[RMDB]
RNA sequence: GGGAACGACUCGAGUAGAGUCGAAAAGUGCGAAGAAGGCUGUAUCGCGUAGAGAGCUGUAUCGGUAGAGAGCUGAAAAUAACUUAGCACCGAAAUACUUAGCACGCGAAAUACUUAGCUCGCUGAAGAUAUGGUGUAAUUUCGAUUGUACCAUAUCAAAAGAAACAACAACAACAAC
Reactivity to 2A3 in 0.01 (KOAc 150mM, MgCl2 10mM, bicine 150mM(pH8.5), 24C), signal-to-noise 9, nucleotides 027 to 126: g130u100g010c020g030a050a030g090a070a040g230g000c050u030g010u050a060u090c010g000c010g010u060a050g040a020g020a010g160c040u030g020u040a050u110c000g020g000u080a070g070a030g030a020g170c020u030g080a030a050a080a160u240a080a040c090u050u070a010g010c010a010c000c000g010a060a060a020u060a010c030u090u090a020g010c010a010c000g000c000g000a090a050a010u080a020c040u100u090a020g020c020u020c040g000c030u050g030a080a020
Reactivity to DMS in 0.01 (KOAc 150mM, MgCl2 10mM, bicine 150mM(pH8.5), 24C), signal-to-noise 9, nucleotides 027 to 126: g020u020g000c010g010a070a070g010a090a090g000g020c110u010g010u010a100u000c000g000c010g020u010a090g010a250g000a040g010c180u020g020u000a080u000c010g000g020u010a110g010a230g010a080g010c080u010g000a050a050a100a120u040a090a160c070u000u010a060g030c110a060c010c010g000a030a070a070u020a040c010u010u010a110g020c170a030c020g000c010g000a030a060a060u030a040c030u010u020a070g000c050u000c020g000c010u010g000a140a100
This 177-nucleotide RNA was probed chemically with 2A3 and DMS. The 2A3 profile rests on 47,397 reads. Conditions: 150 mM KOAc, 10 mM MgCl2 and 150 mM bicine (pH 8.5), 24 C. DMS adducts were read by reverse transcription with MarathonRT.